An RNA of 177 nucleotides, treated with 2A3 and DMS and read out base by base. DMS adducts were read by reverse transcription with MarathonRT. For 2A3, 3,296 sequencing reads were counted. It was measured as part of the RMDB library TTRDES.

[RMDB]
RNA sequence: GGGAACGACUCGAGUAGAGUCGAAAAGAUAUGGACGUGGUGGCUUUUGACGGCUCAUACAUCGGAAACGAUGUAGAGCCGAUAAGCCACACGUCCUAAGUCAAAGAGACCACUUCGGUGGUCUCAAGAAGACUCUAAGGUUCGCCUUAGAGUCUUCAAAAGAAACAACAACAACAAC
Reactivity to 2A3 in 0.01 (KOAc 150mM, MgCl2 10mM, bicine 150mM(pH8.5), 24C), signal-to-noise 1, nucleotides 027 to 126: g010a010u040a000u060g030g010a010c040g000u070g190g300u040g020g170c080u140u090u170u260g270a250c210g000g020c000u000c010a130u020a010c000a000u000c010g020g030a080a000a010c010g000a000u060g000u010a020g000a000g000c020c000g000a000u050a000a010g000c000c000a020c010a000c030g010u000c000c010u010a000a000g000u010c010a060a120a010g010a000g010a000c000c000a020c020u050u100c300g090g010u000g000g020u000c000u020c010a000a000
Reactivity to DMS in 0.01 (KOAc 150mM, MgCl2 10mM, bicine 150mM(pH8.5), 24C), signal-to-noise 2, nucleotides 027 to 126: g010a010u000a220u010g010g010a010c010g020u000g040g020u010g010g000c000u020u000u020u010g030a190c190g010g000c020u000c010a110u000a000c010a020u000c010g010g010a080a040a130c010g030a010u010g010u000a000g000a000g010c010c000g000a010u000a010a010g010c000c000a020c000a000c000g010u000c000c000u010a000a100g000u000c010a140a140a210g000a030g000a010c000c000a000c000u000u010c250g040g020u000g020g000u010c000u000c000a020a080